[RMDB]
RNA sequence: GGGAACGACUCGAGUAGAGUCGAAAAGGAGGUGAGCUUAGAAGCAGCUACCCUCUAAGAAAAGCGUAACAGCUUACCGGCCGAGGUUCGAGGCGCCCAAAAUGAUCGGGGCUCAAGUUCGCCACCGAACAAUCAAUGUUUUCGAACAUUGAUUGUUAAAAGAAACAACAACAACAAC
Reactivity to DMS in 0.01 (KOAc 150mM, MgCl2 10mM, bicine 150mM(pH8.5), 24C), signal-to-noise 9, nucleotides 027 to 126: g010g000a020g010g010u010g010a030g010c000u000u010a100g020a150a160g020c300a050g000c010u000a070c080c000c010u000c010u010a110a100g010a070a080a040a020g010c010g010u010a090a120c180a160g000c000u000u000a080c130c010g010g000c030c020g010a170g010g010u010u010c040g000a060g000g010c040g000c010c000c010a060a050a070a080u040g000a090u010c050g000g000g000g000c020u010c080a060a090g010u010u020c100g000c010c010a100c030c020g000
Reactivity to 2A3 in 0.01 (KOAc 150mM, MgCl2 10mM, bicine 150mM(pH8.5), 24C), signal-to-noise 9, nucleotides 027 to 126: g040g010a020g010g080u190g050a010g000c010u050u090a090g060a260a030g110c080a000g020c010u210a260c000c000c000u000c000u000a020a010g070a020a140a000a000g000c020g020u060a070a040c020a060g000c000u010u020a050c020c000g020g000c010c020g040a060g070g110u040u040c020g020a020g000g010c010g030c000c000c000a050a080a010a070u220g030a070u070c040g010g000g000g000c010u020c080a100a080g050u070u090c040g010c020c030a110c010c010g000
Chemical mapping of a 177-nucleotide RNA with DMS and 2A3. DMS (dimethyl sulfate) methylates the pairing face of unpaired adenines and cytosines.